[RMDB]
RNA sequence: GGGAACGACUCGAGUAGAGUCGAAAAGAUAUGGAUGAAGGGCAGCUUUGAUCGCACUGGUUCGGAAACGAACUUGCGGGAGCUGCCUUCAUCCUAAGUCAAACUUCACCUGUUCGCAGGUGAAGAAGUUGUCAAAAGAGUUCGCUCUUUUGACAACAAAAGAAACAACAACAACAAC
Reactivity to 2A3 in 0.01 (KOAc 150mM, MgCl2 10mM, bicine 150mM(pH8.5), 24C), signal-to-noise 3, nucleotides 027 to 126: g010a000u020a010u060g000g000a000u000g010a010a020g090g110g120c000a000g020c000u300u300u020g000a010u010c000g000c000a020c140u080g050g000u000u000c000g000g000a010a010a000c000g000a010a000c010u010u010g000c010g000g000g000a000g010c010u000g000c000c010u010u000c000a000u000c000c000u010a000a000g000u000c000a030a050a040c010u000u000c000a010c000c000u020g070u080u090c300g050c150a000g010g010u010g000a000a000g000a010a020
Reactivity to DMS in 0.01 (KOAc 150mM, MgCl2 10mM, bicine 150mM(pH8.5), 24C), signal-to-noise 3, nucleotides 027 to 126: g010a010u000a030u010g000g000a000u000g000a000a010g000g020g020c010a010g030c000u000u010u040g010a020u020c000g000c010a010c300u010g000g010u000u000c010g010g000a010a000a020c000g010a010a020c000u000u000g010c000g000g000g000a000g040c010u000g000c000c000u000u000c000a000u000c000c010u000a000a060g000u000c000a150a130a260c010u000u000c000a010c010c000u000g010u000u010c250g030c010a020g010g000u000g000a000a000g000a060a080